[RMDB]
RNA sequence: GGGAACGACUCGAGUAGAGUCGAAAAGGACAGGGAGGAUCUAUGAGGUACCGGAUCGAGUAGGUACCAAGCUAGCUAUAUAUACGCUCGCUAGCAUAGAGCGUUACCGGAAACGGGACCUGUCCGAGCGUAAUAUACCGUUCGCGGUAUAUUACGCAAAAGAAACAACAACAACAAC
Reactivity to DMS in 0.01 (KOAc 150mM, MgCl2 10mM, bicine 150mM(pH8.5), 24C), signal-to-noise 4, nucleotides 027 to 126: g020g000a000c000a010g000g000g040a140g020g020a070u000c050u000a040u000g010a130g030g010u000a010c000c010g010g010a300u020c190g000a180g000u020a120g000g010u000a000c010c010a110a060g010c000u000a010g020c000u000a160u010a130u020a120u010a070c200g000c030u010c140g000c010u000a100g020c010a030u000a020g000a040g010c020g010u010u000a070c020c010g000g000a040a110a130c020g000g000g000a070c010c020u000g010u000c000c000g000a060
Reactivity to 2A3 in 0.01 (KOAc 150mM, MgCl2 10mM, bicine 150mM(pH8.5), 24C), signal-to-noise 2, nucleotides 027 to 126: g000g000a010c000a000g000g030g020a120g090g040a090u000c000u010a000u030g080a070g080g000u010a010c010c010g040g090a170u240c130g040a050g100u160a050g080g000u000a000c010c000a000a000g020c010u000a000g010c010u020a020u020a010u030a020u030a300c070g000c020u000c040g000c010u020a010g030c010a000u020a000g000a000g010c030g030u060u100a100c010c000g000g000a030a010a000c020g000g000g010a010c000c000u010g000u000c000c000g000a010